Annotation
This 177-nucleotide RNA was probed chemically with 2A3 and DMS. 2A3 adducts were read by reverse transcription with SuperScript II with manganese. The RNA was probed in 150 mM KOAc, 10 mM MgCl2 and 150 mM bicine (pH 8.5) at 24 C. For DMS, 8,804 sequencing reads were counted. The data come from the RNA Mapping Database (RMDB), library OK2TST. For DMS the reverse transcriptase was MarathonRT. The 2A3 profile rests on 2,561 reads.
RNA sequence: GGGAACGACUCGAGUAGAGUCGAAAAUCCAGGCGUUAACCUGUAGAGUUGAGAUGGAAACAGCCGGAAAGGUAAUUUUACGCCCUUAACGUAAAGAUCAUUUAUGAAAUAGAUUAGCAUGGGACUAUCUCCACAUAGUAUUCGUACUAUGUGGAGAAAAAGAAACAACAACAACAAC
Reactivity to 2A3 in 0.01 (KOAc 150mM, MgCl2 10mM, bicine 150mM(pH8.5), 24C), signal-to-noise 3, nucleotides 027 to 126: u020c000c000a030g040g000c020g020u040u050a060a050c020c000u030g130u170a050g040a060g110u050u060g060a100g020a160u100g090g040a070a140a000c010a010g020c000c050g030g030a090a060a010g020g020u020a020a090u070u120u120u050a020c020g010c000c000c000u030u070a080a030c070g070u030a040a070a050g060a070u080c030a060u050u150u100a180u140g070a050a100a040u170a060g050a100u080u110a030g030c080a060u070g110g000g000a020c020u050a030
Reactivity to DMS in 0.01 (KOAc 150mM, MgCl2 10mM, bicine 150mM(pH8.5), 24C), signal-to-noise 7, nucleotides 027 to 126: u010c020c000a130g000g020c040g010u000u000a090a070c020c010u000g010u000a120g010a160g010u010u000g000a100g010a130u010g010g010a170a110a110c060a080g010c040c010g010g010a060a100a050g010g010u020a060a070u010u000u000u000a040c050g020c040c040c110u000u010a080a150c060g010u000a030a050a080g010a070u010c050a060u000u000u000a070u020g010a060a070a090u000a070g000a050u000u000a060g020c090a070u000g010g000g020a160c110u000a110